Source: RMDB library OK3TST, as collected in RNAgym.
Chemical mapping of a 207-nucleotide RNA with DMS and 2A3.
High DMS reactivity at an A or C suggests that its Watson-Crick edge is free.
DMS adducts were read by reverse transcription with MarathonRT.
The RNA was probed in 150 mM KOAc, 10 mM MgCl2 and 150 mM bicine (pH 8.5) at 24 C.
For 2A3 the reverse transcriptase was SuperScript II with manganese.

RNA sequence: GGGAACGACUCGAGUAGAGUCGAAAAGUCCAUGAAGCCAUCUGUGGUCUAGGGUGGGGUAGAUGAUUAUUUUAUGUAGUUAGGUUUUAUUUGCCUCUAUAUUAGAAAGAAAUAUAACCUGCACUUCGAAGUCCUGGAUUCAAGGAAAUGGUUGCUAGACUCACUAAUGAUUCGUCAUUAGUGAGUCAAAAGAAACAACAACAACAAC
Reactivity to DMS in 0.01 (KOAc 150mM, MgCl2 10mM, bicine 150mM(pH8.5), 24C), signal-to-noise 2, nucleotides 027 to 156: g030u000c010c020a110u010g030a140a100g020c020c010a060u010c040u010g010u000g020g020u000c020u000a060g000g050g050u000g000g030g020g080u000a030g020a090u000g000a170u010u000a130u010u000u010u010a070u000g000u000a060g010u000u010a050g030g010u010u000u000u000a090u020u020u010g020c010c020u000c010u000a060u010a070u000u000a080g010a060a040a080g010a110a060a050u000a050u000a050a030c020c010u000g010c060a160c020u010u000c040g000a120a200g000u000c000c030u010g010g000a070u010u000c040a040a090g000g010a060a050a100u000g010g020u000u000g000c010u010a180
Reactivity to 2A3 in 0.01 (KOAc 150mM, MgCl2 10mM, bicine 150mM(pH8.5), 24C), signal-to-noise 3, nucleotides 027 to 156: g040u020c030c000a000u100g080a080a020g010c030c010a060u030c060u120g110u090g060g030u000c020u080a030g000g040g020u080g010g020g010g030u020a050g040a140u130g020a030u060u140a070u080u210u060u100a080u100g040u030a060g000u070u110a020g020g010u030u060u040u050a160u060u150u170g070c010c030u030c000u010a120u040a150u240u100a060g040a010a090a010g040a000a060a000u070a020u030a020a010c000c000u040g050c060a010c050u070u100c040g040a060a010g010u000c010c010u030g010g020a040u070u100c040a030a010g000g010a040a080a010u080g050g000u020u030g050c030u080a030